[RMDB]
RNA sequence: GGGAACGACUCGAGUAGAGUCGAAAACUUCUGACUGCCGUGUCCGAUGGGCCGCAAAACAACGACUUGUAACUCCCCUCCUAACAGACACACACGUGCGCCGAAGAAAAAGCGCGGGGGUCGGGGAAUUUAGGAGGCUAUUCGUAGCCUCCUAAAUAAAAGAAACAACAACAACAAC
Reactivity to DMS in 0.01 (KOAc 150mM, MgCl2 10mM, bicine 150mM(pH8.5), 24C), signal-to-noise 1, nucleotides 027 to 126: c030u000u030c120u000g000a060c040u000g010c010c030g000u000g020u020c080c050g050a120u000g000g000g040c060c010g000c050a060a080a090a100c120a070a090c150g000a020c100u020u010g010u000a050a150c170u010c020c010c000c020u020c010c010u030a090a130c160a070g020a050c080a020c020a060c120a120c130g040u010g020c020g000c000c000g010a110a230g020a080a110a080a240a140g020c020g080c040g000g000g000g020g070u000c020g000g000g000g000a090
Description:
Conditions: 150 mM KOAc, 10 mM MgCl2 and 150 mM bicine (pH 8.5), 24 C. Structure probing data (DMS) for a 177-nucleotide construct. For DMS the reverse transcriptase was MarathonRT. Source: RMDB library OK2TST, as collected in RNAgym. For DMS, 563 sequencing reads were counted.